[RMDB]
RNA sequence: GGGAACGACUCGAGUAGAGUCGAAAAUUUUUGACAGAGUCUUGCUCUGUUGCCCAGGCUGGAGUUCAGUGGCAUGAUCUUUGCUUACUGCAACCUCUACCUUCUAGGUUCAAGCAAUUCUUGUGCCUCAGCCAUCCAAGUAGCUGGGAUUACAGGAGCCAUAAUGACGAUUCGUCGUCAUUAUGGCAAAAGAAACAACAACAACAAC
Reactivity to 2A3 in 0.01 (KOAc 150mM, MgCl2 10mM, bicine 150mM(pH8.5), 24C), signal-to-noise 1, nucleotides 027 to 156: u110u120u050u160u180g000a050c000a000g090a000g040u050c150u270u190g060c070u050c070u010g000u070u050g040c110c070c040a000g000g110c000u120g030g000a050g010u040u020c010a000g030u000g030g000c000a020u030g080a240u130c230u030u210u020g030c030u000u100a070c010u050g000c010a000a000c020c000u000c040u050a100c020c060u260u230c110u090a050g000g050u020u040c020a030a070g060c010a060a080u130u100c000u000u000g000u040g010c010c000u010c000a010g040c000c020a050u080c100c090a220a060g030u040a020g040c000u000g000g030g010a010u060u010a040c030a020g010g060a000
Chemical mapping of a 207-nucleotide RNA with 2A3. High 2A3 reactivity points to a flexible backbone, as in loops and unpaired stretches.